[RMDB]
RNA sequence: GGGAACGACUCGAGUAGAGUCGAAAAGAGGUGCAUGGCCGCCGUCAGCUCGUACCGUGAGGCGUCCUGUUAAGUCAGGCAACGAGCGAGACCCGCACUUCUAGUUGCCAGCAAUACCCUUGAGGUAUCCCCAAGUCUGAUUCGUCAGACUUGGGGAAAAAGAAACAACAACAACAAC
Reactivity to DMS in 0.01 (KOAc 150mM, MgCl2 10mM, bicine 150mM(pH8.5), 24C), signal-to-noise 3, nucleotides 027 to 126: g000a020g000g010u010g010c000a080u030g030g020c100c090g020c030c050g070u030c070a160g000c030u010c000g010u000a290c060c040g000u070g010a230g000g010c280g000u020c000c030u000g000u000u030a040a120g000u010c010a050g000g000c300a190a050c030g000a060g000c030g010a110g000a130c020c020c300g000c030a020c000u000u010c000u000a050g000u000u000g040c010c030a050g000c160a170a110u010a010c030c000c010u050u010g010a090g000g010u000a070
Reactivity to 2A3 in 0.01 (KOAc 150mM, MgCl2 10mM, bicine 150mM(pH8.5), 24C), signal-to-noise 3, nucleotides 027 to 126: g000a010g000g000u010g000c030a070u210g040g010c060c050g050c020c000g100u050c030a020g030c010u030c070g070u120a120c070c040g060u090g040a050g030g000c020g070u200c010c000u050g000u050u130a200a240g210u070c020a000g000g030c010a030a000c020g010a000g060c000g000a010g050a110c000c020c000g020c000a010c000u010u000c010u010a090g090u010u050g060c000c000a060g020c020a020a020u020a100c000c000c000u050u230g060a170g130g000u020a070
Chemical mapping of a 177-nucleotide RNA with DMS and 2A3.
Conditions: 150 mM KOAc, 10 mM MgCl2 and 150 mM bicine (pH 8.5), 24 C.
The data come from the RNA Mapping Database (RMDB), libraries RFM100 and RFMREP.
Values cover nucleotides 27 to 126.